Structure probing data (2A3 and DMS) for a 177-nucleotide construct. For DMS the reverse transcriptase was MarathonRT. High 2A3 reactivity points to a flexible backbone, as in loops and unpaired stretches. Values are in units of 0.01, from 0 to 300, in steps of 10. Conditions: 150 mM KOAc, 10 mM MgCl2 and 150 mM bicine (pH 8.5), 24 C. The data come from the RNA Mapping Database (RMDB), libraries RFM100 and RFMREP.
RNA sequence: GGGAACGACUCGAGUAGAGUCGAAAAGGGUGAUUGUUUCCCUCAAAUGCAUGCCAGAUAAAGUGCCCUUGGGUACAAGAAAGAUGUAUCUCCAGCUGUUGAUAAGAGGGGGAAGCCUUUCUCUUCCACACAGCUGUGCAUUCGUGCACAGCUGUGUAAAAGAAACAACAACAACAAC
Reactivity to 2A3 in 0.01 (KOAc 150mM, MgCl2 10mM, bicine 150mM(pH8.5), 24C), signal-to-noise 2, nucleotides 027 to 126: g050g000g020u050g040a110u040u000g000u010u030u000c000c000c000u000c020a120a110a000u130g010c000a030u300g000c000c080a030g000a040u100a050a120a050g040u060g040c000c080c000u090u130g140g000g020u000a050c050a130a020g040a220a120a000g080a060u170g050u140a040u000c000u010c010c010a010g000c000u010g000u040u020g130a060u170a220a030g020a020g050g000g000g010g000a030a000g000c030c030u000u190u070c030u040c000u060u050c000c000
Reactivity to DMS in 0.01 (KOAc 150mM, MgCl2 10mM, bicine 150mM(pH8.5), 24C), signal-to-noise 2, nucleotides 027 to 126: g000g020g060u010g000a150u010u000g020u000u010u020c010c000c000u030c010a050a180a140u000g000c010a070u000g010c000c220a090g000a070u000a070a050a080g040u000g030c010c030c020u030u020g040g000g000u010a000c000a130a120g040a160a090a090g000a100u030g020u000a000u000c000u000c050c080a050g040c030u030g050u000u030g080a090u030a090a060g010a200g000g030g010g010g020a020a080g000c050c100u000u040u000c030u000c000u000u020c040c110